[RMDB]
RNA sequence: GGGAACGACUCGAGUAGAGUCGAAAACAAUUAUUUAUUGGAUGUGCAGAACCAAGAUCCAGUAAUGGUCAAGUGUGUGUUGGAUAGGCGGGUGGGGCGCAGCGUGACACUUGGUCAAACGAAGCUAACCAUGAGCCGGUAGUAAGUGUAGAGGAAGCAUCACGAUUAGUUUCGACUAAUCGUGAUGAAAAGAAACAACAACAACAAC
Reactivity to 2A3 in 0.01 (KOAc 150mM, MgCl2 10mM, bicine 150mM(pH8.5), 24C), signal-to-noise 2, nucleotides 027 to 156: c020a020a070u170u100a110u070u210u050a060u040u020g000g020a050u060g050u080g030c100a050g030a100a030c030c000a100a020g070a050u000c000c020a000g030u050a010a110u070g000g030u030c050a050a050g000u010g000u010g010u000g010u060u100g060g050a070u050a160g050g010c070g000g100g020u080g000g000g000g030c020g000c020a010g010c060g020u070g030a010c010a020c080u060u110g050g010u060c050a050a010a000c100g030a080a000g010c010u030a060a080c030c000a020u040g030a020g050c010c010g030g000u010a000g000u000a090a050g000u030g040u130a050g000a020g050g050a030a000g010
Reactivity to DMS in 0.01 (KOAc 150mM, MgCl2 10mM, bicine 150mM(pH8.5), 24C), signal-to-noise 1, nucleotides 027 to 156: c060a130a080u020u000a090u000u000u020a050u000u010g000g010a000u030g050u010g000c080a080g000a090a140c060c030a030a140g020a050u000c030c030a060g010u010a060a040u010g010g000u000c010a030a080g000u000g030u010g040u010g030u000u000g000g030a160u000a020g010g020c050g000g000g020u000g010g010g010g000c070g050c040a140g030c030g010u000g000a090c060a080c070u000u000g010g000u000c020a070a060a120c060g040a130a140g030c040u000a080a080c000c030a070u000g000a080g030c050c050g000g040u000a040g040u000a030a090g060u010g040u010a100g000a180g000g020a090a130g000
An RNA of 207 nucleotides, treated with 2A3 and DMS and read out base by base. The reactions ran in a buffer of 150 mM KOAc, 10 mM MgCl2 and 150 mM bicine (pH 8.5), at 24 C. For DMS, 2,664 sequencing reads were counted. Reactivities are given for positions 27 through 156. The 2A3 profile rests on 2,006 reads.